[RMDB]
Conditions: 150 mM KOAc, 10 mM MgCl2 and 150 mM bicine (pH 8.5), 24 C. Chemical mapping of a 207-nucleotide RNA with DMS and 2A3. For 2A3, 581 sequencing reads were counted. It was measured as part of the RMDB library OK3TST. The DMS profile rests on 1,633 reads.
RNA sequence: GGGAACGACUCGAGUAGAGUCGAAAAUGUAUGCAAUGGUAUGAGGAACUGUUCCACAUUAAAGGAGACUAAGAAGACAUAACAACUCGAUGCAAUGUGUGAUUCUGGACUGGAUCUUGCAUUGGAGGAGAAAAUGCUAUAAAAGUGUCUUGCUCUAUGGCCGCAUACCAUUCGUGGUAUGCGGCCAAAAAGAAACAACAACAACAAC
Reactivity to DMS in 0.01 (KOAc 150mM, MgCl2 10mM, bicine 150mM(pH8.5), 24C), signal-to-noise 1, nucleotides 027 to 156: u000g060u010a020u020g020c050a020a110u060g000g130u010a040u000g000a090g030g020a030a100c040u000g060u000u000c000c040a170c050a140u000u000a040a050a070g020g000a070g010a120c110u000a080a100g060a120a060g010a070c040a020u000a030a070c020a140a070c050u000c040g000a060u000g010c010a020a010u000g070u040g020u000g000a070u020u000c030u010g020g000a110c110u000g000g020a020u000c000u000u000g030c010a060u000u010g020g020a110g030g000a200g000a090a050a030a050u000g050c040u000a160u000a010a060a010a170g040u010g020u000c070u000u000g000c010u000c040u000a020
Reactivity to 2A3 in 0.01 (KOAc 150mM, MgCl2 10mM, bicine 150mM(pH8.5), 24C), signal-to-noise 1, nucleotides 027 to 156: u100g020u100a050u080g080c070a110a000u000g000g000u050a020u030g000a060g020g060a000a010c030u110g050u140u000c010c050a010c000a030u110u050a220a030a030g070g020a020g000a000c070u040a020a070g020a000a000g030a020c000a000u110a060a090c010a000a000c000u000c000g040a010u000g060c000a020a020u020g030u000g060u060g120a000u000u050c040u030g020g120a030c070u070g000g000a010u000c000u050u070g030c000a000u000u100g110g100a050g000g000a030g010a000a030a000a000u060g000c040u020a000u070a050a050a000a000g060u020g030u030c010u050u040g010c000u020c030u000a090